The record gives the reactivity of an RNA of 207 nucleotides to 2A3. The RNA was probed in 150 mM KOAc, 10 mM MgCl2 and 150 mM bicine (pH 8.5) at 24 C. It was measured as part of the RMDB library RNAMAK. Values cover nucleotides 27 to 156.
RNA sequence: GGGAACGACUCGAGUAGAGUCGAAAAGGGGUCGAAUACACAAGGCCAUAGCUUUUGACGAGCUGAAGCCUCCACGGCUCGAUAAGCUAUGGAACUACCUUGAGUAUUCGACGGAGGCACCCAAAGGUACUGGUAAAGUUCGCUUUACCAGUACCAAGGGAAUAACAGUCUUCGGACUGUUAUUCCCAAAAGAAACAACAACAACAAC
Reactivity to 2A3 in 0.01 (KOAc 150mM, MgCl2 10mM, bicine 150mM(pH8.5), 24C), signal-to-noise 2, nucleotides 027 to 156: g030g000g020g000u000c000g000a010a000u010a000c010a000c000a040a000g000g000c000c000a000u000a000g010c030u070u240u300u300g170a120c090g000a000g030c000u010g020a110a020g020c010c000u020c000c000a020c010g030g050c010u000c010g040a090u140a300a000g010c010u000a000u020g000g040a000a010c090u300a060c050c000u000u000g000a010g020u000a000u000u000c000g000a000c000g000g000a000g000g000c000a020c030c000c000a070a030a060g000g000u000a000c000u000g000g000u000a020a000a000g020u030u100c210g040c170u000u000u010a000c000c000a000g000u000a000c000c000a000a000